[RMDB]
RNA sequence: GGGAACGACUCGAGUAGAGUCGAAAAAUUACGGGCGGCGCAGGUGGAGCUGCGAUCCCUCCGCCCAUCGCGUGCUCUCUCGGUGGGCCAGACGCUGCAAACGGACAGGCGGGCCACCUGCAACGAAGUUUAAUAUGUGCUUCGGCACAUAUUAAACAAAAGAAACAACAACAACAAC
Reactivity to DMS in 0.01 (KOAc 150mM, MgCl2 10mM, bicine 150mM(pH8.5), 24C), signal-to-noise 3, nucleotides 027 to 126: a080u010u010a100c110g010g000g010c040g010g010c300g010c030a030g010g010u010g000g000a130g010c030u000g010c030g010a110u000c010c020c020u010c060c090g020c000c000c000a040u000c020g000c090g010u000g010c080u000c080u000c030u000c060g000g000u000g000g010g000c050c100a090g000a120c090g010c020u000g000c070a090a080a140c210g000g010a130c070a080g010g000c050g010g010g000c010c010a010c010c020u010g020c020a100a140c140g010a070a080
Reactivity to 2A3 in 0.01 (KOAc 150mM, MgCl2 10mM, bicine 150mM(pH8.5), 24C), signal-to-noise 3, nucleotides 027 to 126: a000u160u090a080c080g000g000g020c050g030g000c040g000c030a000g000g010u050g020g080a060g090c020u020g010c030g030a070u040c010c000c010u040c000c010g000c000c010c000a000u020c010g040c030g030u080g040c030u040c010u000c010u020c190g040g010u040g000g020g000c020c010a070g020a070c030g000c090u060g000c050a090a130a140c040g040g050a040c020a030g060g060c030g010g030g010c000c010a010c000c020u000g010c010a000a020c030g060a090a020

This 177-nucleotide RNA was probed chemically with DMS and 2A3. Source: RMDB library M2PK90, as collected in RNAgym. Conditions: 150 mM KOAc, 10 mM MgCl2 and 150 mM bicine (pH 8.5), 24 C.